Conditions: 150 mM KOAc, 10 mM MgCl2 and 150 mM bicine (pH 8.5), 24 C. An RNA of 177 nucleotides, treated with 2A3 and DMS and read out base by base. For DMS the reverse transcriptase was MarathonRT. The data come from the RNA Mapping Database (RMDB), library TTRDEL.

[RMDB]
RNA sequence: GGGAACGACUCGAGUAGAGUCGAAAAGAUAUGGAACGACGGAUGAAGGCGAUGAAGUCGGAAACGAUGGAGCCUCAUUUCGUUCCUAAGUCAAACGAGGUAGACUGGUUCGCCAGUCUACCUCGAACUUAUCGAGAUACUUCGGUAUCUCGAUAAGAAAAGAAACAACAACAACAAC
Reactivity to 2A3 in 0.01 (KOAc 150mM, MgCl2 10mM, bicine 150mM(pH8.5), 24C), signal-to-noise 2, nucleotides 027 to 126: g010a010u160a020u190g000g000a000a000c010g060a000c210g100g000a000u010g140a170a070g010g000c070g150a250u070g040a020a000g010u000c010g020g060a050a080a010c010g000a010u020g010g010a010g000c000c000u000c000a010u050u080u020c000g000u000u040c010c000u010a120a030g040u050c010a000a090a110c040g000a010g000g010u010a000g010a010c030u030g030g010u050u230c290g050c050c010a000g000u000c000u020a000c010c000u000c000g000a000a000
Reactivity to DMS in 0.01 (KOAc 150mM, MgCl2 10mM, bicine 150mM(pH8.5), 24C), signal-to-noise 5, nucleotides 027 to 126: g000a050u000a300u020g000g000a000a000c000g010a010c300g000g000a020u010g010a100a040g010g000c000g020a130u000g000a140a050g000u000c010g020g030a130a040a090c000g010a020u000g010g000a090g010c000c000u000c000a010u000u000u000c000g010u000u010c010c000u010a030a100g000u010c030a110a050a140c030g000a000g000g000u000a000g000a000c000u020g000g000u000u010c230g020c010c000a000g010u010c000u000a000c000c000u000c000g000a000a050